Chemical mapping of a 177-nucleotide RNA with DMS and 2A3. Reactivities are given for positions 27 through 126. The data come from the RNA Mapping Database (RMDB), library TTRDEL. The RNA was probed in 150 mM KOAc, 10 mM MgCl2 and 150 mM bicine (pH 8.5) at 24 C. For DMS, 5,982 sequencing reads were counted.
[RMDB]
RNA sequence: GGGAACGACUCGAGUAGAGUCGAAAAGAUAUGGACGUUUGACGUACCUACCCACCAAGAUCCUCGGAAACGAGGGCCUUGAGGGUACCGAGUCCUAAGUCAGAGCGUAGCACUUCGGUGCUACGAACUAUUGGACGACUUUCGAGUCGUCCAAUAGAAAAGAAACAACAACAACAAC
Reactivity to DMS in 0.01 (KOAc 150mM, MgCl2 10mM, bicine 150mM(pH8.5), 24C), signal-to-noise 6, nucleotides 027 to 126: g010a050u000a220u000g000g000a000c010g020u010u020u010g000a160c300g010u000a010c010c010u000a080c030c040c070a300c080c010a000a000g000a030u000c010c000u000c000g000g000a090a070a120c000g000a010g000g010g000c050c000u000u000g000a100g010g000g020u000a000c010c030g010a120g020u010c000c000u010a050a090g000u010c040a100g010a140g020c020g010u000a000g000c010a000c000u000u010c160g020g000u000g000c000u000a000c000g010a030a100
Reactivity to 2A3 in 0.01 (KOAc 150mM, MgCl2 10mM, bicine 150mM(pH8.5), 24C), signal-to-noise 3, nucleotides 027 to 126: g040a040u140a080u210g010g010a030c080g070u090u280u300g060a040c040g000u030a020c000c000u100a150c010c050c040a020c040c000a000a000g000a030u000c010c010u020c000g010g020a060a050a030c000g030a000g000g000g000c000c000u000u000g020a040g010g000g000u000a010c010c010g050a040g000u030c000c020u020a110a040g100u090c120a050g040a040g280c020g020u020a000g000c010a000c020u050u080c300g120g000u000g000c000u000a000c010g000a010a010